The record gives the reactivity of an RNA of 177 nucleotides to DMS and 2A3. For 2A3, 11,613 sequencing reads were counted. For DMS, 6,214 sequencing reads were counted. It was measured as part of the RMDB library TTRDES.
RNA sequence: GGGAACGACUCGAGUAGAGUCGAAAAGAUAUGGAAAUACCCAGGGAGGAACAUAUCGGAAACGAUAUGCUUCCUUUGAUCUGGAUUUCCUAAGUCAAACAACAACUGAGUUCGCUCAGUUGUUGAACGAACAGAAUAACUUCGGUUAUUCUGUUCGAAAAGAAACAACAACAACAAC
Reactivity to DMS in 0.01 (KOAc 150mM, MgCl2 10mM, bicine 150mM(pH8.5), 24C), signal-to-noise 5, nucleotides 027 to 126: g000a000u000a010u010g010g010a010a000a010u000a160c280c000c010a020g020g010g000a000g010g020a030a080c000a000u000a000u000c000g020g010a000a000a010c000g010a010u000a000u000g010c300u000u010c000c000u000u010u020g010a010u010c000u000g000g000a040u000u000u010c000c000u010a000a090g000u000c000a160a110a300c010a010a010c010a000a010c000u000g000a010g010u000u020c270g010c000u000c000a000g010u000u000g010u000u000g000a110a170
Reactivity to 2A3 in 0.01 (KOAc 150mM, MgCl2 10mM, bicine 150mM(pH8.5), 24C), signal-to-noise 2, nucleotides 027 to 126: g000a000u010a000u020g010g100a030a000a020u220a300c020c000c020a000g000g010g000a010g000g000a010a000c000a000u010a010u000c000g000g030a010a000a000c000g010a000u000a000u010g010c020u020u030c000c000u010u170u010g000a000u000c000u000g020g000a000u000u010u010c010c010u000a010a010g000u000c000a060a030a200c010a000a020c000a000a000c010u010g010a000g020u140u170c300g180c120u000c000a000g000u000u010g010u000u000g010a050a040